[RMDB]
RNA sequence: GGGAACGACUCGAGUAGAGUCGAAAACGGUUGCGCUUGGCACAUUUCGAGCAUGGUCCAACGGAAACCGAACACAGUGAUCGGGGGGCGUGGUUAUCGUUUGAGCUAGCGCUCAACAAGAUGCGUGAGCCAGACUGGUGUUCGCACCAGUCUGGCUAAAAGAAACAACAACAACAAC
Reactivity to DMS in 0.01 (KOAc 150mM, MgCl2 10mM, bicine 150mM(pH8.5), 24C), signal-to-noise 2, nucleotides 027 to 126: c060g010g020u000u000g030c010g000c180u000u000g040g000c120a090c070a010u000u000u000c190g000a090g010c180a020u000g000g010u000c020c020a080a050c030g020g000a100a010a030c020c010g000a150a110c120a120c110a130g000u000g010a100u010c040g000g000g110g000g000g000c070g000u000g000g000u000u000a090u010c060g020u000u010u010g010a010g030c030u020a130g000c240g030c000u000c010a010a020c110a050a130g000a090u010g010c030g030u000g010